Chemical mapping of a 177-nucleotide RNA with DMS and 2A3. It was measured as part of the RMDB library OK2TRN. 2A3 adducts were read by reverse transcription with SuperScript II with manganese. The reactions ran in a buffer of 150 mM KOAc, 10 mM MgCl2 and 150 mM bicine (pH 8.5), at 24 C.

RNA sequence: GGGAACGACUCGAGUAGAGUCGAAAAAGCAAGGACGGUUCAUUCUUAAUAUUGACCUACUAUGUUGGUCCACAUACUAAGUUCAUUGUCAUCCAUAAAGACAAUCUCAAAAACAUGGAUGGGCCCCCAACAGAAAUACUUUCGAGUAUUUCUGUUGAAAAGAAACAACAACAACAAC
Reactivity to DMS in 0.01 (KOAc 150mM, MgCl2 10mM, bicine 150mM(pH8.5), 24C), signal-to-noise 7, nucleotides 027 to 126: a050g020c090a040a070g010g010a090c150g010g010u000u000c050a070u000u010c120u000u010a070a090u010a060u000u000g010a030c010c000u000a150c060u000a100u010g010u000u000g040g010u000c010c070a070c130a040u000a060c080u010a070a080g010u000u000c110a050u000u000g010u000c010a070u000c080c090a070u010a060a090a130g010a040c040a040a060u010c120u010c050a040a050a070a100a140c150a040u000g000g000a060u000g010g000g000c010c000c020c050
Reactivity to 2A3 in 0.01 (KOAc 150mM, MgCl2 10mM, bicine 150mM(pH8.5), 24C), signal-to-noise 7, nucleotides 027 to 126: a000g020c010a010a010g020g030a030c090g040g060u120u150c040a030u080u030c040u110u220a220a150u120a100u180u080g000a000c020c000u000a010c010u070a100u210g020u020u020g020g000u020c020c000a040c020a050u110a020c040u080a060a100g030u050u100c030a020u080u040g040u030c010a030u000c110c020a070u160a090a140a010g010a010c020a040a080u000c050u010c080a130a220a030a030a020c040a030u050g030g020a070u010g000g030g000c020c030c000c000